Chemical mapping of a 177-nucleotide RNA with DMS and 2A3. For DMS the reverse transcriptase was MarathonRT.
[RMDB]
RNA sequence: GGGAACGACUCGAGUAGAGUCGAAAAGUUACAGAAAUUAAGCAAUUGUGACGCAAGCGUGGUACUUGGUGAAGCGUAUGUUGACGUCGACACAGGUUACUUGAUUUCCGACAUUGCAGCUUAUUCACGGAGCAUUGGAAUUCGUUCCAAUGCUCCGAAAAGAAACAACAACAACAAC
Reactivity to DMS in 0.01 (KOAc 150mM, MgCl2 10mM, bicine 150mM(pH8.5), 24C), signal-to-noise 2, nucleotides 027 to 126: g010u010u000a060c050a030g020a040a150a090u010u020a020a050g030c030a120a060u020u000g000u020g000a050c040g000c170a020a070g000c090g010u020g000g050u010a090c010u000u000g010g020u000g010a200a080g020c050g000u010a060u000g020u010u000g010a050c010g030u000c010g020a210c070a010c040a020g000g010u010u000a010c030u000u000g000a060u000u000u000c020c080g010a120c170a090u000u010g050c070a050g000c040u000u010a110u010u020c100a220
Reactivity to 2A3 in 0.01 (KOAc 150mM, MgCl2 10mM, bicine 150mM(pH8.5), 24C), signal-to-noise 2, nucleotides 027 to 126: g000u020u020a010c030a020g080a050a140a030u060u040a150a060g000c020a020a080u110u050g070u030g010a000c020g020c090a010a050g050c030g050u050g060g000u100a040c020u120u120g120g080u190g080a010a000g000c030g000u030a110u180g240u090u150g120a060c040g010u170c070g030a030c010a000c010a030g090g000u030u040a020c010u010u080g090a090u040u050u060c020c000g020a020c050a060u080u010g050c040a050g000c050u110u130a050u080u110c060a020